[RMDB]
RNA sequence: GGGAACGACUCGAGUAGAGUCGAAAAGUAGUGGGCGUUGGAAUUUUGAGUGGACCUGACUCUAGUACGAGAGGACCGAGUUGGACGUACCUCUAGUGUAUCAGUUGUGCCGCUAGGUGCAUUGCUGGACUAUGCCGCAAUUCGUUGCGGCAUAGUCAAAAGAAACAACAACAACAAC
Reactivity to DMS in 0.01 (KOAc 150mM, MgCl2 10mM, bicine 150mM(pH8.5), 24C), signal-to-noise 2, nucleotides 027 to 126: g000u010a050g040u010g010g020g000c080g010u020u030g000g020a060a110u000u000u060u000g000a070g040u010g010g010a100c050c020u010g010a060c030u000c040u010a070g010u010a060c060g000a080g010a130g000g000a080c120c050g020a070g020u000u000g000g020a110c140g010u000a080c060c010u000c050u000a040g000u020g010u010a080u010c060a050g000u000u010g000u000g010c040c040g000c160u020a050g000g030u000g030c020a020u000u000g010c090u000g010
Reactivity to 2A3 in 0.01 (KOAc 150mM, MgCl2 10mM, bicine 150mM(pH8.5), 24C), signal-to-noise 2, nucleotides 027 to 126: g040u090a010g030u060g000g050g000c070g120u080u020g040g090a080a110u020u040u050u140g070a050g000u070g000g020a120c020c000u000g010a090c000u000c030u030a080g050u030a020c020g010a020g000a010g050g020a010c040c040g000a030g050u050u070g040g000a010c060g040u070a160c020c000u000c000u070a100g110u050g020u110a060u210c040a010g000u040u010g080u050g030c020c000g030c090u100a060g020g030u050g000c030a090u010u110g010c000u030g000
Structure probing data (DMS and 2A3) for a 177-nucleotide construct. For DMS the reverse transcriptase was MarathonRT. The reactions ran in a buffer of 150 mM KOAc, 10 mM MgCl2 and 150 mM bicine (pH 8.5), at 24 C. Source: RMDB libraries RFM100 and RFMREP, as collected in RNAgym.